[RMDB]
This 177-nucleotide RNA was probed chemically with 2A3 and DMS. The reactions ran in a buffer of 150 mM KOAc, 10 mM MgCl2 and 150 mM bicine (pH 8.5), at 24 C. DMS adducts were read by reverse transcription with MarathonRT. Reactivities are rounded to 0.1 and cut off at 0 and 3. Source: RMDB libraries RFM100 and RFMREP, as collected in RNAgym. High DMS reactivity at an A or C suggests that its Watson-Crick edge is free.

RNA sequence: GGGAACGACUCGAGUAGAGUCGAAAAACGAUCCAGGAUAUUACGAUAUCCUGGAUCGAGACUUUGAGUGUCCAGCCCACGCGAUUAGCGAAAGGCUGAUGGCUGGUGGCUUUUGCCACCGGCCUAAUAGUAUACUUCAUUUCGAUGAAGUAUACUAAAAAGAAACAACAACAACAAC
Reactivity to 2A3 in 0.01 (KOAc 150mM, MgCl2 10mM, bicine 150mM(pH8.5), 24C), signal-to-noise 9, nucleotides 027 to 126: a000c010g000a000u000c000c000a010g000g010a000u010a010u040u080a080c250g050a010u010a000u010c000c010u000g010g000a000u000c000g000a000g000a000c040u140u100u170g090a070g070u110g050u030c030c000a000g000c000c020c000a030c010g010c000g270a300u150u280a090g010c010g050a140a060a010g010g020c000u010g050a100u110g000g000c000u000g000g000u000g000g010c030u070u100u250u300g000c000c000a000c000c000g000g000c000c000u000a010a000
Reactivity to DMS in 0.01 (KOAc 150mM, MgCl2 10mM, bicine 150mM(pH8.5), 24C), signal-to-noise 8, nucleotides 027 to 126: a130c010g000a010u000c000c000a000g000g000a010u000a000u000u010a110c200g020a050u000a010u000c000c000u000g000g000a000u000c000g000a030g010a100c090u010u010u020g010a120g010u010g010u010c090c010a010g000c000c000c070a300c030g000c000g010a170u040u050a110g010c000g000a060a100a210g000g010c000u000g000a110u010g000g010c000u000g010g010u000g000g000c000u000u010u020u040g010c000c000a000c000c000g000g010c000c000u000a010a040